[RMDB]
RNA sequence: GGGAACGACUCGAGUAGAGUCGAAAAAUACACCACCAGUAGGACUCAGCGACCGUCACAACAAGGUUGUGCUGGUAUCCGACGGUCGUAUAGCCCUGUCUUGCAGGUUGCCUUGCACUGACGUGCCACACCAUUUACAGAUUCGUCUGUAAAUGAAUACACUAACUAACUUCGGUUAGUUAGUGUAAAAAGAAACAACAACAACAAC
Reactivity to DMS in 0.01 (KOAc 150mM, MgCl2 10mM, bicine 150mM(pH8.5), 24C), signal-to-noise 4, nucleotides 027 to 156: a120u010a100c050a190c030c020a120c060c030a130g020u000a040g020g010a080c020u000c090a190g030c010g010a020c000c000g010u000c020a190c090a110a070c050a070a090g020g010u010u000g010u000g020c030u010g000g030u000a060u000c080c030g010a070c020g020g000u000c020g020u000a070u000a050g010c010c000c010u000g010u000c030u000u010g010c060a110g010g020u000u000g010c030c110u000u000g020c020a070c050u000g020a120c120g030u000g010c020c050a080c060a130c120c010a020u000u000u000a000c010a010g000a080u010u000c300g020u000c000u000g020u000a010a000a010u000g000a080a160
Reactivity to 2A3 in 0.01 (KOAc 150mM, MgCl2 10mM, bicine 150mM(pH8.5), 24C), signal-to-noise 6, nucleotides 027 to 156: a000u130a010c060a010c000c020a010c000c010a030g020u040a030g020g020a030c020u040c090a020g000c000g020a000c010c010g030u060c020a040c030a170a100c050a120a110g100g040u070u040g070u140g070c070u060g090g020u050a090u070c040c070g000a000c000g000g000u000c000g010u070a090u090a110g030c010c000c010u020g030u050c030u030u060g020c040a040g070g000u050u100g040c020c010u040u070g010c010a040c080u110g050a040c110g010u010g010c010c000a090c010a030c030c010a010u000u000u000a000c000a000g010a020u010u110c150g090u020c070u000g000u000a000a000a000u000g000a010a010
Chemical mapping of a 207-nucleotide RNA with DMS and 2A3. Reactivities are given for positions 27 through 156. It was measured as part of the RMDB library M2RFPK. The 2A3 profile rests on 5,929 reads. For DMS, 10,891 sequencing reads were counted. The RNA was probed in 150 mM KOAc, 10 mM MgCl2 and 150 mM bicine (pH 8.5) at 24 C.